[RMDB]
RNA sequence: GGGAACGACUCGAGUAGAGUCGAAAACUGCAGCAGCGCGACAUCGGACACAUCGAUUGCGGUGACCUGGCGGCCGUGGGCGGCCAACGCCAGUGCGGUACCCGAUCGACCGCUGGCUAACUCCAGAAUAAUACGACUAGUUCGCUAGUCGUAUUAUAAAAGAAACAACAACAACAAC
Reactivity to 2A3 in 0.01 (KOAc 150mM, MgCl2 10mM, bicine 150mM(pH8.5), 24C), signal-to-noise 9, nucleotides 027 to 126: c040u080g020c040a050g000c000a000g010c010g000c010g030a020c010a030u030c020g010g030a030c030a000c000a180u030c020g140a150u090u300g100c060g030g020u020g020a050c010c010u000g010g000c020g040g010c020c010g140u300g090g190g080c130g020g000c010c010a050a010c050g000c000c000a020g020u040g080c040g040g020u060a050c010c000c010g000a010u010c000g010a020c000c010g010c010u020g080g000c010u020a030a030c020u010c030c000a020g080a140
Reactivity to DMS in 0.01 (KOAc 150mM, MgCl2 10mM, bicine 150mM(pH8.5), 24C), signal-to-noise 9, nucleotides 027 to 126: c090u010g020c170a050g010c010a040g000c020g010c030g010a280c300a020u010c020g000g010a130c100a140c080a060u000c030g010a180u010u010g020c070g010g010u000g000a180c140c030u000g000g010c010g010g010c000c010g020u010g010g010g020c060g010g020c010c040a040a060c090g010c010c010a030g010u010g010c050g010g010u000a080c080c010c000g000a030u000c040g000a220c300c010g010c010u000g010g010c030u000a080a120c100u000c030c030a100g010a250
An RNA of 177 nucleotides, treated with 2A3 and DMS and read out base by base.
For DMS the reverse transcriptase was MarathonRT.
The reactions ran in a buffer of 150 mM KOAc, 10 mM MgCl2 and 150 mM bicine (pH 8.5), at 24 C.
The data come from the RNA Mapping Database (RMDB), library OK2TST.
Values cover nucleotides 27 to 126.